RNA sequence: GGGAACGACUCGAGUAGAGUCGAAAAGAUAUGGAAAACGUUAUUGCCAAUGUGUGUGGCAACAGCGAUCCAUCGGAAACGAUGGUGUCGACAUGCCAACACAUUGGCAAUAACGUUUUCCUAAGUCCAUGAGGAUGGAGUUCGCUCCAUCCUCAUGAAAAGAAACAACAACAACAAC
Reactivity to DMS in 0.01 (KOAc 150mM, MgCl2 10mM, bicine 150mM(pH8.5), 24C), signal-to-noise 2, nucleotides 027 to 126: g000a130u000a300u000g010g000a020a000a000a020c000g010u010u000a010u010u000g000c000c000a010a030u010g010u000g010u000g010u020g000g000c010a030a070c300a170g000c040g000a030u000c020c010a010u010c010g020g000a180a100a180c010g030a010u000g010g010u010g030u000c000g000a100c090a230u000g000c000c000a040a020c000a010c010a000u000u000g010g010c000a000a000u000a000a000c000g010u000u000u000u000c010c000u000a030a090g000u000c020